[RMDB]
RNA sequence: GGGAACGACUCGAGUAGAGUCGAAAACCACGGCGGCGGCAGCGGCAAGCAGAAGAAGCAGCGUCAUUGCCGUGGAUCGGAGGCGGGGCGUCCGUCAGGUCUGCCUCCCAAUCCCCACGCCCCACCGAAUAAAUCCGGUGUUCGCACCGGAUUUAUUAAAAGAAACAACAACAACAAC
Reactivity to 2A3 in 0.01 (KOAc 150mM, MgCl2 10mM, bicine 150mM(pH8.5), 24C), signal-to-noise 5, nucleotides 027 to 126: c000c000a010c010g010g000c010g000g000c030g030g000c040a100g010c070g050g010c050a100a060g050c070a040g090a300a000g080a140a010g090c020a010g020c010g040u040c010a040u000u060g000c000c010g000u010g010g000a030u110c070g010g000a010g030g000c050g020g010g000g010c010g040u050c040c010g080u090c060a020g030g130u010c030u080g010c010c000u030c010c000c010a000a060u030c000c000c010c000a030c030g010c000c000c000c000a050c010c060g050
Reactivity to DMS in 0.01 (KOAc 150mM, MgCl2 10mM, bicine 150mM(pH8.5), 24C), signal-to-noise 3, nucleotides 027 to 126: c010c000a060c040g020g000c030g010g010c120g000g010c020a140g030c040g010g040c010a090a120g020c180a220g010a160a080g000a120a120g010c000a040g010c020g000u000c020a040u000u010g000c000c010g000u030g000g010a010u010c250g000g010a030g000g030c010g000g020g000g000c010g010u010c010c020g000u040c060a080g000g000u010c040u010g000c030c030u020c000c000c130a140a120u020c040c010c010c090a050c090g000c000c000c000c010a090c050c080g020